[RMDB]
RNA sequence: GGGAACGACUCGAGUAGAGUCGAAAAGCCCCGUAGUAAGUUAAUUUUCAUUAACCACCACGAGGCAUCCCUAUGUCUAGUCCACAUCAGGAUAGCCUCUUACCGCGCUUUGCGCAAGGAGAAGAAGGUCCUAUGUUAGCUUCGGCUAACAUAGGACAAAAGAAACAACAACAACAAC
Reactivity to 2A3 in 0.01 (KOAc 150mM, MgCl2 10mM, bicine 150mM(pH8.5), 24C), signal-to-noise 3, nucleotides 027 to 126: g010c000c000c000c000g030u030a020g010u010a090a070g010u010u020a030a020u060u100u140u230c210a050u020u020a010a020c000c010a030c010c000a030c060g000a010g000g020c010a020u020c010c000c010u040a070u050g080u000c040u020a030g080u000c010c010a030c020a150u060c060a040g010g010a000u010a040g050c010c010u000c020u000u020a060c040c000g000c010g010c060u100u090u300g000c030g000c030a030a080g060g010a090g010a110a020g050a060a040g090
Reactivity to DMS in 0.01 (KOAc 150mM, MgCl2 10mM, bicine 150mM(pH8.5), 24C), signal-to-noise 1, nucleotides 027 to 126: g000c000c000c000c000g030u000a030g000u030a300a180g000u000u000a000a000u000u100u070u080c280a020u000u000a000a010c000c110a040c030c100a020c020g000a050g000g000c000a080u000c000c000c000u080a070u120g030u020c000u040a140g000u010c050c060a030c140a180u000c130a000g070g010a030u000a140g060c060c010u000c000u000u000a050c140c080g020c000g000c040u020u090u110g010c000g000c000a030a060g020g000a100g050a130a080g000a110a070g030
About this RNA
An RNA of 177 nucleotides, treated with 2A3 and DMS and read out base by base. 2A3 adducts were read by reverse transcription with SuperScript II with manganese. The DMS profile rests on 1,150 reads.